[RMDB]
RNA sequence: GGGAACGACUCGAGUAGAGUCGAAAACAGGUGGAGACGGAUCCGGGUCCGGGACCCAUCUCGAGUUGGAGUCAAAGCUUUGUGCUUGUCUGGCGCUCGGAUUCUGUCUCCUUCGGCUCUCCAGAGUCCUGUGGCAUCUGUUCGCAGAUGCCACAGGAAAAGAAACAACAACAACAAC
Reactivity to 2A3 in 0.01 (KOAc 150mM, MgCl2 10mM, bicine 150mM(pH8.5), 24C), signal-to-noise 2, nucleotides 027 to 126: c050a030g210g100u110g040g010a000g000a010c010g020g020a000u000c000c010g010g010g010u020c000c000g000g010g010a000c000c000c020a010u020c090u070c120g300a300g140u000u010g030g070a240g010u020c050a020a010a030g000c010u180u160u300g100u220g040c030u020u060g030u020c000u000g010g000c150g010c040u030c010g000g000a000u060u070c000u030g000u000c000u000c000c000u010u000c000g000g000c000u000c000u000c020c010a030g000a000g010u010